Structure probing data (DMS and 2A3) for a 177-nucleotide construct. It was measured as part of the RMDB library RFM100. Conditions: 150 mM KOAc, 10 mM MgCl2 and 150 mM bicine (pH 8.5), 24 C.
RNA sequence: GGGAACGACUCGAGUAGAGUCGAAAAUAACGUAUCACGACUAAACGUAAGGGUAAAGCGGCUGGCAUGUCGUCCGGGCAUAAAGUCAUAUCGCCUGAACAGAGAACAUGUUACUGACUUUGAAACGGGGGCAUAAGUUAUUCGUAACUUAUGCCCCAAAAGAAACAACAACAACAAC
Reactivity to DMS in 0.01 (KOAc 150mM, MgCl2 10mM, bicine 150mM(pH8.5), 24C), signal-to-noise 1, nucleotides 027 to 126: u140a080a140c180g000u000a000u000c120a200c120g000a040c080u010a120a120a000c000g000u000a040a000g040g030g000u000a010a040a080g000c060g000g000c130u000g000g000c060a030u000g000u000c020g010u050c040c000g030g000g080c000a030u000a000a080a110g000u040c110a070u010a050u000c190g030c020c000u000g000a050a020c060a130g020a100g000a300a060c090a000u000g030u020u050a240c190u000g000a070c050u000u000u000g000a030a020a040c210g000
Reactivity to 2A3 in 0.01 (KOAc 150mM, MgCl2 10mM, bicine 150mM(pH8.5), 24C), signal-to-noise 1, nucleotides 027 to 126: u220a020a000c000g070u040a040u140c020a010c050g140a070c060u110a260a000a000c040g020u030a000a070g000g000g110u070a000a010a010g000c000g020g000c080u030g000g000c010a020u080g000u000c040g110u000c030c000g000g000g030c010a010u090a180a300a010g170u080c000a090u040a010u040c030g000c000c000u070g000a070a000c150a060g040a000g000a040a010c000a000u040g000u000u000a020c030u000g090a040c000u030u160u000g060a060a050a110c060g060